[RMDB]
RNA sequence: GGGAACGACUCGAGUAGAGUCGAAAAGUCGCGUAUCCAUCGGGUGUGCUUCCUGAUAUGCGAGGCUGGACAAUCAAGGGGAAACCCGCCAGCGGUCGUGCUGUAUUGUCUCAGGAACAGGAUGGAACGAUAUCGAGUACUUCGGUACUCGAUAUCGAAAAGAAACAACAACAACAAC
Reactivity to DMS in 0.01 (KOAc 150mM, MgCl2 10mM, bicine 150mM(pH8.5), 24C), signal-to-noise 3, nucleotides 027 to 126: g020u020c060g010c060g010u000a110u000c020c050a030u000c020g030g030g040u000g010u000g000c150u000u000c000c000u010g000a050u000a080u000g000c010g020a040g020g040c010u010g000g030a160c190a090a130u020c250a110a130g020g010g000g000a090a080a260c000c000c010g030c040c010a020g020c030g000g020u000c050g020u000g000c140u010g000u000a090u010u010g000u010c130u000c000a020g010g000a040a030c080a080g030g010a040u000g000g010a050a180
Reactivity to 2A3 in 0.01 (KOAc 150mM, MgCl2 10mM, bicine 150mM(pH8.5), 24C), signal-to-noise 2, nucleotides 027 to 126: g050u050c030g030c070g090u080a140u030c010c010a010u010c020g060g250g000u240g050u090g060c040u050u000c000c000u020g000a020u070a050u260g040c030g010a010g040g000c020u020g000g000a040c070a070a250u210c080a170a120g000g000g000g020a010a030a040c020c000c000g000c020c010a010g000c010g060g240u030c020g020u010g000c050u090g060u170a130u190u140g090u020c020u000c040a010g020g000a010a030c000a050g050g070a010u020g010g020a030a060